RNA sequence: GGGAACGACUCGAGUAGAGUCGAAAAGACAAAUGCAGCAUAUUAGGCUAAGCAGGAAAGGGACGGUAGCUCCUGGUGUCAGUUCAUACGGUGUGAUGCAUCUGCGUCGUGGACACAUGCACCCAAAGUCACGACUGGUAUUCGUACCAGUCGUGACAAAAGAAACAACAACAACAAC
Reactivity to 2A3 in 0.01 (KOAc 150mM, MgCl2 10mM, bicine 150mM(pH8.5), 24C), signal-to-noise 1, nucleotides 027 to 126: g060a030c070a030a110a000u110g000c040a010g000c030a030u060a150u250u100a070g060g000c000u030a020a030g040c000a020g000g040a070a000a020g050g000g000a000c030g030g030u060a040g000c050u020c020c020u070g000g000u010g060u050c000a000g000u050u030c040a030u090a170c070g070g010u040g000u020g070a050u090g000c040a110u040c020u080g040c000g000u060c120g000u040g000g000a000c020a000c000a020u060g000c000a050c010c000c010a010a110a020
Reactivity to DMS in 0.01 (KOAc 150mM, MgCl2 10mM, bicine 150mM(pH8.5), 24C), signal-to-noise 1, nucleotides 027 to 126: g010a090c060a030a100a090u000g000c040a030g000c000a080u010a120u000u010a050g010g000c080u000a080a110g000c030a050g000g000a070a100a060g030g000g000a090c070g000g000u000a110g050c060u010c040c070u000g040g020u000g030u000c050a070g000u020u000c030a030u000a100c110g030g000u000g010u020g020a040u000g000c030a030u000c010u000g000c070g000u000c080g020u000g010g000a100c060a070c060a020u010g000c070a070c000c000c050a060a010a130